Record summary:
Source: RMDB library M2PK50, as collected in RNAgym. An RNA of 177 nucleotides, treated with 2A3 and DMS and read out base by base. For 2A3 the reverse transcriptase was SuperScript II with manganese. The 2A3 profile rests on 1,763 reads.

RNA sequence: GGGAACGACUCGAGUAGAGUCGAAAACUUCGCAACUUCGGUUGCGAAGAAUGGCAGCUCGUCCCGGCCCUGGGUUCGCCGGGUUAUAAAACAUAACACAUCACUGGCUACCAUUCGUGGUAGCCAACCAUGAUGACUUCUUCGGAAGUCAUCAUGGAAAAGAAACAACAACAACAAC
Reactivity to 2A3 in 0.01 (KOAc 150mM, MgCl2 10mM, bicine 150mM(pH8.5), 24C), signal-to-noise 1, nucleotides 027 to 126: c000u000u000c000g000c000a010a020c000u020u080c210g120g000u020u020g000c060g020a000a000g010a000a010u060g010g020c040a050g040c030u010c030g100u110c000c000c000g080g050c000c050c000u060g020g020g010u110u050c020g020c010c050g030g000g000u070u030a210u080a050a050a010a010c040a030u080a010a010c050a000c000a090u100c030a030c150u050g000g000c000u000a010c000c000a030u000u050c270g070u010g010g020u000a000g000c010c000a000a000
Reactivity to DMS in 0.01 (KOAc 150mM, MgCl2 10mM, bicine 150mM(pH8.5), 24C), signal-to-noise 2, nucleotides 027 to 126: c000u000u000c000g000c010a000a010c000u000u020c220g020g000u000u020g020c000g000a010a010g000a030a060u000g010g020c020a040g000c030u000c030g000u020c020c010c010g010g010c030c070c110u020g020g000g000u000u000c140g000c060c070g010g000g000u000u000a010u000a080a050a080a160c190a060u000a040a030c050a110c130a060u030c120a080c240u000g010g010c000u010a020c000c000a040u000u040c230g030u000g010g030u000a020g010c010c000a000a050